[RMDB]
RNA sequence: GGGAACGACUCGAGUAGAGUCGAAAACUAGUGAAGACCACCAGAAUGAGUUUCCGAAAUACAAGCGCAUUGCUUGUCACGGUGGUGCAGGGACUGAGGAUAUGAAAGGGAUGUGCGGCGUCGCCAGACCUGGCCAGUUAUUCGUAACUGGCCAGGUAAAAGAAACAACAACAACAAC
Reactivity to DMS in 0.01 (KOAc 150mM, MgCl2 10mM, bicine 150mM(pH8.5), 24C), signal-to-noise 3, nucleotides 027 to 126: c090u000a080g020u010g010a130a070g000a070c050c020a020c000c020a120g020a140a070u020g020a150g070u000u010u000c020c030g010a120a080a100u000a060c020a000a010g010c000g010c300a120u010u030g000c020u000u000g000u010c170a080c050g000g010u000g000g020u000g000c110a080g010g000g010a090c070u000g020a090g010g000a100u000a040u000g010a050a070a060g000g010g000a030u000g010u010g020c050g000g000c090g010u000c080g010c020c070a090g000
Reactivity to 2A3 in 0.01 (KOAc 150mM, MgCl2 10mM, bicine 150mM(pH8.5), 24C), signal-to-noise 1, nucleotides 027 to 126: c010u000a020g100u050g180a070a020g090a040c000c010a000c000c010a000g050a160a130u100g060a110g040u040u030u050c050c050g030a060a070a020u120a070c030a000a030g000c030g040c200a280u090u300g000c000u030u010g000u010c000a000c080g000g040u030g000g000u020g000c000a020g000g040g010a000c070u080g040a040g070g010a060u050a060u280g120a040a060a000g030g000g020a000u050g040u000g010c050g050g020c030g000u040c000g030c030c010a000g010